An RNA of 207 nucleotides, treated with 2A3 and read out base by base.
RNA sequence: GGGAACGACUCGAGUAGAGUCGAAAACGCAGAGUGUUCUGAUAACAAAGAACCUAGAUAGCCGCAUCGGUAUUAUAGGAUGUAGUCGGUGAGCCGGAAUGCCUGCAUCGUAAGCCUAUAAGUAAAUUUAAGUGUAAUCACUUCGGUGAUUACACAAUCGCUCUGUAAACUUCGGUUUACAGAGCGAAAAAGAAACAACAACAACAAC
Reactivity to 2A3 in 0.01 (KOAc 150mM, MgCl2 10mM, bicine 150mM(pH8.5), 24C), signal-to-noise 1, nucleotides 027 to 156: c060g010c010a030g020a060g020u080g000u060u000c060u000g110a170u120a150a020c060a030a120a030g010a010a000c030c020u010a050g050a110u010a070g060c000c010g130c160a230u170c100g110g040u120a050u070u080a120u100a070g010g020a010u010g020u070a020g060u070c090g070g000u050g050a010g130c030c000g000g040a020a000u020g010c000c000u040g010c000a010u090c060g150u050a020a020g040c020c010u100a080u070a080a040g100u210a000a130a120u080u150u060a150a030g000u000g000u010a000a000u000c000a000c000u010u020c130g050g000u020g000a000u000u000a000c000a000c000a010a000
The RNA was probed in 150 mM KOAc, 10 mM MgCl2 and 150 mM bicine (pH 8.5) at 24 C. Source: RMDB library M2RFPK, as collected in RNAgym. 2A3 adducts were read by reverse transcription with SuperScript II with manganese.